[RMDB]
RNA sequence: GGGAACGACUCGAGUAGAGUCGAAAAGACACGUUAAUGAUAAUAUUCUAUUUGCUAAAUUAUUAGCUAUGCAGUUAAGGCAAGAGAUAGAUUAUUUUCGUGAUGUUCAGAUGGCUAUAAAAAGUAUAUCUGCAAAUUUAGGUGAGCCUAUGGGGUAAAUAUAGAGGAGGUUCGCCUCCUCUAUAUUAAAAGAAACAACAACAACAAC
Reactivity to DMS in 0.01 (KOAc 150mM, MgCl2 10mM, bicine 150mM(pH8.5), 24C), signal-to-noise 2, nucleotides 027 to 156: g000a140c010a010c020g020u020u010a060a040u010g000a060u000a060a090u000a110u010u000c020u000a100u020u000u000g000c000u000a070a120a190u000u000a090u000u000a060g020c000u000a090u000g020c080a100g000u010u010a090a170g020g020c050a050a110g020a060g030a060u000a080g010a080u000u010a030u010u010u000u020c020g080u010g010a150u000g000u000u000c010a040g000a090u000g040g010c010u000a080u010a040a050a070a060a100g020u000a060u000a020u010c020u000g020c050a050a060a120u020u000u000a080g030g030u000g000a090g010c020c020u000a090u000g020g000g020g000u000a050
Reactivity to 2A3 in 0.01 (KOAc 150mM, MgCl2 10mM, bicine 150mM(pH8.5), 24C), signal-to-noise 2, nucleotides 027 to 156: g020a000c010a000c020g020u010u020a100a070u100g030a010u030a160a030u020a190u100u110c020u070a200u100u110u070g000c010u080a060a220a200u260u120a180u150u020a130g010c020u030a060u210g150c060a020g040u010u120a120a020g030g000c010a010a020g010a000g010a130u000a000g020a000u020u000a030u010u020u030u060c010g010u030g050a090u060g010u040u030c000a000g010a030u020g060g000c000u020a020u080a280a120a020a000a020g030u030a080u000a020u260c010u000g040c020a000a050a050u080u170u070a070g000g000u010g020a020g000c020c000u020a070u130g000g000g000g000u000a020